[RMDB]
RNA sequence: GGGAACGACUCGAGUAGAGUCGAAAACAAGAUCGAAUAUAGAACGAUGACCAGGACUCACUCCUAUGGCUCAUCGUUGCACCUGUGAGUGAGGGAUGGUACUAAUGACUCACUCGUAUCGUCUUAAGUCCAUCCCAUCGUUCGGAUGGGAGUGAGCCGAGUGUUUACAGUUCGCUGUAAACACUCGAAAAGAAACAACAACAACAAC
Reactivity to 2A3 in 0.01 (KOAc 150mM, MgCl2 10mM, bicine 150mM(pH8.5), 24C), signal-to-noise 6, nucleotides 027 to 156: c070a030a040g060a100u110c060g070a200a040u250a060u110a190g110a120a020c020g000a000u020g020a010c000c030a020g030g050a060c020u010c030a020c030u050c020c020u180a150u160g020g000c080u020c020a060u020c050g010u020u090g000c050a070c010c050u120g040u110g100a020g010u010g010a030g000g020g050a020u020g000g050u070a070c000u040a040a120u140g000a010c010u020c050a040c020u060c080g040u110a100u130c040g050u000c000u060u090a060a040g020u000c020c010a000u020c000c020c000a030u000c010g160u190u110c100g090g020a020u050g020g030g010a030g040u060g020a000g020c040
Reactivity to DMS in 0.01 (KOAc 150mM, MgCl2 10mM, bicine 150mM(pH8.5), 24C), signal-to-noise 1, nucleotides 027 to 156: c070a070a070g010a040u000c040g000a150a150u010a260u000a040g000a090a100c050g000a030u010g030a060c010c000a120g030g010a110c050u000c130a080c050u020c000c040u000a070u000g020g000c040u000c010a040u000c050g000u010u000g000c050a100c050c010u000g000u000g010a030g030u000g040a150g010g010g000a130u000g010g020u000a080c080u020a080a160u000g020a070c010u000c010a010c070u000c060g090u000a100u000c050g010u010c040u010u030a100a100g020u010c020c010a050u000c020c030c000a070u000c000g010u000u000c110g040g010a080u000g010g000g000a030g040u010g010a020g040c030

Chemical mapping of a 207-nucleotide RNA with 2A3 and DMS. DMS (dimethyl sulfate) methylates the pairing face of unpaired adenines and cytosines. For 2A3, 3,502 sequencing reads were counted. DMS adducts were read by reverse transcription with MarathonRT.